[RMDB]
RNA sequence: GGGAACGACUCGAGUAGAGUCGAAAAAUCUUUGGACACAAUCACGUCUUACAAUGAUAUUUUAAACAAAAAUUCAAAGAAGUCAAGAUUGGCUUUCCUAUCUGCAGAUCAGUCGAAAUGGUCGGCACUCUCAUUCCAGAUUCGUCUGGAAUGAGAGAAAAGAAACAACAACAACAAC
Reactivity to DMS in 0.01 (KOAc 150mM, MgCl2 10mM, bicine 150mM(pH8.5), 24C), signal-to-noise 1, nucleotides 027 to 126: a110u010c050u000u000u030g030g000a130c210a110c030a000a030u000c000a240c280g000u000c000u000u000a130c010a000a300u000g000a000u000a030u030u010u000u000a060a140a220c080a010a040a040a020a120u000u000c030a030a090a230g010a030a000g000u000c010a300a160g030a030u010u010g000g010c150u000u040u000c000c000u000a080u000c160u010g000c000a010g000a010u000c000a010g000u000c190g010a130a090a010u000g000g000u000c030g030g070c030a220
Reactivity to 2A3 in 0.01 (KOAc 150mM, MgCl2 10mM, bicine 150mM(pH8.5), 24C), signal-to-noise 1, nucleotides 027 to 126: a000u060c080u150u090u130g110g000a080c090a000c020a240a000u030c010a020c130g030u000c020u070u140a160c060a100a120u040g040a020u010a120u190u130u060u090a050a120a000c020a020a160a000a040a020u020u020c020a020a030a010g030a030a000g010u020c010a000a080g030a150u000u000g020g030c030u030u050u000c020c030u050a160u220c070u060g000c000a000g000a030u010c030a000g070u180c110g110a040a060a170u040g030g010u010c030g040g000c010a000
This 177-nucleotide RNA was probed chemically with DMS and 2A3.
For 2A3 the reverse transcriptase was SuperScript II with manganese.
The reactions ran in a buffer of 150 mM KOAc, 10 mM MgCl2 and 150 mM bicine (pH 8.5), at 24 C.
DMS adducts were read by reverse transcription with MarathonRT.